[RMDB]
RNA sequence: GGGAACGACUCGAGUAGAGUCGAAAAAGAGGAGGCUGUGUUUUGCGAUCUUUAAGCAGAUGGCAGGUUCACCCCGUACGGUGCGGAAGUUCGCGCUUCCGUGAAACGCGAAAAUCGGACGGUGGCUAAGACCAAUAACAGUUCGCUGUUAUUGGAACUAAGUCAUAAGCUUCGGCUUAUGACUUAGAAAAGAAACAACAACAACAAC
Reactivity to DMS in 0.01 (KOAc 150mM, MgCl2 10mM, bicine 150mM(pH8.5), 24C), signal-to-noise 3, nucleotides 027 to 156: a090g000a100g020g010a070g020g020c020u000g010u000g010u000u000u000u000g020c030g010a090u000c050u000u000u010a080a140g040c060a080g000a080u000g000g030c010a060g010g000u000u000c090a060c020c010c000c010g020u000a030c030g020g030u000g010c030g010g000a050a080g040u010u000c190g010c300g020c010u000u010c030c090g030u010g010a050a050a040c060g030c050g000a090a040a090a040u000c030g000g010a030c010g000g000u000g020g030c030u010a040a130g010a160c010c000a010a020u000a010a020c010a010g010u000u010c300g050c010u010g020u000u000a010u010u000g020g000a030a110
Reactivity to 2A3 in 0.01 (KOAc 150mM, MgCl2 10mM, bicine 150mM(pH8.5), 24C), signal-to-noise 7, nucleotides 027 to 156: a000g060a040g030g000a020g020g020c040u030g020u000g030u070u080u110u060g030c030g030a050u050c050u060u140u080a080a040g020c040a020g020a070u060g060g000c040a020g040g030u080u090c040a050c000c010c010c000g000u020a020c030g010g010u050g020c000g000g010a020a000g010u070u200c080g010c030g020c140u010u000c010c000g000u010g040a090a090a010c130g020c020g060a050a020a010a080u050c000g020g000a020c030g000g050u100g020g000c020u050a070a010g020a070c000c010a000a000u000a000a000c000a000g020u050u070c160g050c100u000g000u000u000a000u000u000g000g000a000a020
This 207-nucleotide RNA was probed chemically with DMS and 2A3.
For DMS, 10,017 sequencing reads were counted.
The RNA was probed in 150 mM KOAc, 10 mM MgCl2 and 150 mM bicine (pH 8.5) at 24 C.
For 2A3 the reverse transcriptase was SuperScript II with manganese.